[RMDB]
An RNA of 177 nucleotides, treated with DMS and 2A3 and read out base by base. Source: RMDB library OK2TRN, as collected in RNAgym. Reactivities are given for positions 27 through 126. For 2A3 the reverse transcriptase was SuperScript II with manganese.

RNA sequence: GGGAACGACUCGAGUAGAGUCGAAAAAACUAAAACAAAACCAUUGGAAGGGUCUUCCUAAGAAUUAGUUCUGUCAGGUUUUACGGACCUCCCCGAAGAACUCCAUGGCAAAGAUCUUAGAGUUAGGCAAUCACCAAAGUUUCGACUUUGGUGAUUGAAAAGAAACAACAACAACAAC
Reactivity to DMS in 0.01 (KOAc 150mM, MgCl2 10mM, bicine 150mM(pH8.5), 24C), signal-to-noise 3, nucleotides 027 to 126: a050a060c030u000a050a030a060a070c040a060a100a120a090c010c040a020u010u010g000g000a180a050g000g000g000u000c020u000u000c000c160u000a060a080g010a020a050u000u000a110g000u000u000c030u000g000u000c080a150g000g010u000u000u010u010a090c180g010g000a090c030c020u000c020c020c020c060g030a060a050g000a050a030c020u000c010c040a060u000g000g020c070a050a100a090g000a060u000c070u000u000a050g010a070g010u000u000a060g010g000
Reactivity to 2A3 in 0.01 (KOAc 150mM, MgCl2 10mM, bicine 150mM(pH8.5), 24C), signal-to-noise 1, nucleotides 027 to 126: a010a000c050u100a050a020a010a000c030a040a170a010a020c010c020a050u030u220g050g030a030a010g000g030g080u090c020u050u000c000c000u030a110a010g060a030a030u160u110a040g080u060u040c000u010g080u070c070a010g050g020u010u070u110u070a050c020g040g050a020c000c030u040c010c040c010c010g000a000a000g030a030a020c020u000c000c000a020u040g010g000c040a080a250a000g050a020u030c000u040u090a030g080a050g160u070u010a020g070g000